An RNA of 177 nucleotides, treated with 2A3 and read out base by base. 2A3 is a SHAPE reagent: it acylates the 2'-hydroxyl of flexible nucleotides of all four kinds.
[RMDB]
RNA sequence: GGGAACGACUCGAGUAGAGUCGAAAAACUGGAACUCCAUUUGCUACUGAUUGAUCAAUGAUAGUGUCAAUCGUCUCUGCAAGUUGGUGUGGUUCCUUGCACUUAAUGUUAUGAAGAGCUGCAGCCAAGAUCGGGACGGGUUCGCCCGUCCCGAUCUAAAAGAAACAACAACAACAAC
Reactivity to 2A3 in 0.01 (KOAc 150mM, MgCl2 10mM, bicine 150mM(pH8.5), 24C), signal-to-noise 1, nucleotides 027 to 126: a000c010u000g000g140a010a010c000u020c130c030a010u010u010u000g000c000u000a060c040u030g030a030u060u000g010a020u080c040a190a140u170g080a250u160a160g190u160g050u050c000a000a000u000c040g110u000c060u030c030u000g000c000a000a010g100u060u030g150g000u140g000u030g100g000u000u030c000c000u050u040g000c010a010c000u000u080a060a080u300g130u060u300a040u300g090a040a040g100a000g090c070u000g020c000a000g000c000c000a030